[RMDB]
RNA sequence: GGGAACGACUCGAGUAGAGUCGAAAAGGGGUGCAAAUGUUGUUCGUGAAAAACUCCUAACUGAUGAUAUAAAUAGGAAUAUGUUCAUACUUAACUGCAUUGACAGUGCGUUCGGCCUUGGAGCUGCCGUGUUUUCACACCCAAAUGGAAUAUUAGAACCGAUAGCAAUUUUCGAAUUGCUAUCGGUAAAAGAAACAACAACAACAAC
Reactivity to 2A3 in 0.01 (KOAc 150mM, MgCl2 10mM, bicine 150mM(pH8.5), 24C), signal-to-noise 2, nucleotides 027 to 156: g030g010g000g030u080g040c040a080a130a150u060g000u000u020g020u030u060c090g070u050g000a010a040a030a070a070c050u050c020c000u000a040a020c060u070g110a040u040g010a040u180a030u090a270a160a010u050a020g010g090a040a030u100a050u280g070u040u040c010a060u110a170c000u080u080a110a000c050u130g000c010a090u120u080g070a060c040a030g040u030g080c010g000u010u080c010g000g000c000c040u050u100g040g000a010g020c030u030g000c040c020g000u010g000u000u010u070u080c040a030c000a010c000c000c000a040a000a060u120g030g070a090a020u050a120u200u120a050g140a090
Reactivity to DMS in 0.01 (KOAc 150mM, MgCl2 10mM, bicine 150mM(pH8.5), 24C), signal-to-noise 2, nucleotides 027 to 156: g050g030g040g010u010g000c040a050a190a140u000g030u000u010g040u000u000c080g030u000g000a080a030a090a080a040c040u000c010c000u000a080a150c090u000g010a090u000g010a160u010a090u000a040a050a100u000a060g020g000a090a120u000a070u000g000u000u010c040a050u000a040c050u000u010a040a090c050u000g020c010a090u000u000g010a070c060a050g040u000g010c060g040u000u010c000g000g020c030c060u000u000g030g000a190g020c040u000g030c060c030g000u010g040u000u000u000u050c050a040c000a120c040c020c010a050a050a090u000g000g010a040a140u000a140u000u000a090g020a190